An RNA of 177 nucleotides, treated with DMS and 2A3 and read out base by base. DMS adducts were read by reverse transcription with MarathonRT. The data come from the RNA Mapping Database (RMDB), library OK2TST. The reactions ran in a buffer of 150 mM KOAc, 10 mM MgCl2 and 150 mM bicine (pH 8.5), at 24 C. The DMS profile rests on 8,727 reads. Values cover nucleotides 27 to 126.

[RMDB]
RNA sequence: GGGAACGACUCGAGUAGAGUCGAAAACGUUGAUAUGAAUCGAACCAUGUUCUUGCGAAAACUUUUCGGCUUCGUCGCGACAGCCGUCAUCCUGAUCGUCGCGAUCCUGAUCGGGCGCACGCUGUGAUAUUAAAUUUACCUUCGGGUAAAUUUAAUAAAAAGAAACAACAACAACAAC
Reactivity to DMS in 0.01 (KOAc 150mM, MgCl2 10mM, bicine 150mM(pH8.5), 24C), signal-to-noise 7, nucleotides 027 to 126: c150g020u000u000g020a100u010a120u000g000a090a080u000c110g010a090a110c110c080a100u000g010u000u000c050u000u000g010c070g000a080a070a060a070c070u010u000u010u000c020g010g000c010u010u010c100g010u000c070g000c020g020a130c250a060g010c030c050g000u000c110a070u000c040c030u000g010a080u000c070g010u000c070g020c020g000a020u000c060c040u010g000a090u000c130g010g000g010c050g010c050a030c080g020c100u000g010u000g000a180
Reactivity to 2A3 in 0.01 (KOAc 150mM, MgCl2 10mM, bicine 150mM(pH8.5), 24C), signal-to-noise 2, nucleotides 027 to 126: c050g020u060u060g010a080u080a040u300g090a070a060u130c070g010a030a080c050c030a090u190g020u010u010c060u080u150g060c060g040a030a060a040a080c030u050u040u040u070c010g000g020c000u130u060c060g060u040c030g000c010g040a030c020a000g020c030c040g010u050c020a100u080c000c020u090g030a120u050c040g060u020c030g000c000g070a030u040c010c020u100g020a090u090c060g050g000g000c010g040c020a010c050g000c020u080g030u070g120a050